[RMDB]
This 207-nucleotide RNA was probed chemically with DMS and 2A3. For 2A3, 1,588 sequencing reads were counted. The DMS profile rests on 2,094 reads.

RNA sequence: GGGAACGACUCGAGUAGAGUCGAAAAUGAAAAUUGCCAUUACAGAUUGACGCCAACCACAUUUCCUCAGAGCGAAGGAACUCGUGUUUGGUUACCUAGGUCUCACUUGUGUUUUAGUGCAGAGAAUUAAACAUGUGUCCAGGCGCCCUCCUUACUACUAGCAGUAGUGAUUCGUCACUACUGCUAGAAAAGAAACAACAACAACAAC
Reactivity to DMS in 0.01 (KOAc 150mM, MgCl2 10mM, bicine 150mM(pH8.5), 24C), signal-to-noise 1, nucleotides 027 to 156: u000g000a100a080a120a100u010u000g010c020c030a110u000u010a200c070a110g000a080u010u000g000a110c080g000c000c010a040a110c050c060a050c050a110u010u000u000c020c030u010c010a120g000a160g040c110g040a200a050g000g010a060a010c070u010c110g070u010g010u000u010u030g000g030u010u000a040c000c030u000a080g010g010u010c000u010c020a060c020u010u000g000u020g020u000u000u000u000a080g020u010g080c060a080g000a140g000a080a080u000u010a030a050a040c070a110u000g010u010g000u000c010c020a140g000g030c000g020c050c010c010u000c010c050u010u000a030c020u000a150
Reactivity to 2A3 in 0.01 (KOAc 150mM, MgCl2 10mM, bicine 150mM(pH8.5), 24C), signal-to-noise 3, nucleotides 027 to 156: u110g020a060a000a000a070u120u100g030c040c020a040u070u080a070c030a120g140a160u080u100g050a080c030g000c010c000a010a000c040c000a010c010a030u020u010u010c000c000u040c060a070g050a060g210c030g100a120a020g020g020a000a010c030u070c220g010u000g030u010u000u030g010g010u030u030a040c020c020u030a070g040g040u020c000u000c050a030c000u030u050g030u020g090u140u060u050u110a070g010u040g000c010a000g070a000g010a210a090u070u090a110a080a000c050a080u070g030u000g030u030c050c080a030g020g030c020g000c000c010c000u000c020c010u090u050a060c090u000a020
Conditions: 150 mM KOAc, 10 mM MgCl2 and 150 mM bicine (pH 8.5), 24 C.